[RMDB]
RNA sequence: GGGAACGACUCGAGUAGAGUCGAAAACGGUGUCAGGAUCAGAGACUUCAUAGAAAUGAGCAACGGUUGAAGUACCAGGAGGAAAGUUUGAGCUCACUGAACCAAGCUUGACAAUCUUCCCAGACGGUAUGCAGUAGGCUUUCGAGCCUACUGCAUAAAAAGAAACAACAACAACAAC
Reactivity to DMS in 0.01 (KOAc 150mM, MgCl2 10mM, bicine 150mM(pH8.5), 24C), signal-to-noise 2, nucleotides 027 to 126: c160g030g030u000g000u000c020a010g010g010a120u010c070a050g000a110g010a060c040u000u000c030a050u000a090g000a070a090a080u020g000a100g000c080a070a190c110g010g010u000u000g000a050a090g030u000a040c060c000a110g000g030a050g020g000a060a050a130g000u000u000u000g010a040g030c060u000c050a110c120u000g020a050a040c100c090a080a100g000c050u030u000g000a040c030a060a190u000c040u000u000c010c000c040a160g010a100c160g000g010
Reactivity to 2A3 in 0.01 (KOAc 150mM, MgCl2 10mM, bicine 150mM(pH8.5), 24C), signal-to-noise 1, nucleotides 027 to 126: c040g040g020u010g030u060c030a010g010g060a140u100c020a040g050a020g020a180c020u080u030c050a030u050a130g100a100a160a090u160g020a070g040c030a060a070c050g140g020u000u000g110a150a000g000u020a050c040c020a000g020g040a000g000g070a090a020a050g060u130u160u160g030a000g000c010u030c080a090c040u040g010a010a020c040c010a030a000g050c030u050u010g000a000c030a050a090u030c020u000u000c000c000c020a010g030a040c050g000g080
Conditions: 150 mM KOAc, 10 mM MgCl2 and 150 mM bicine (pH 8.5), 24 C.
An RNA of 177 nucleotides, treated with DMS and 2A3 and read out base by base.
For DMS, 1,081 sequencing reads were counted.
It was measured as part of the RMDB library OK2TST.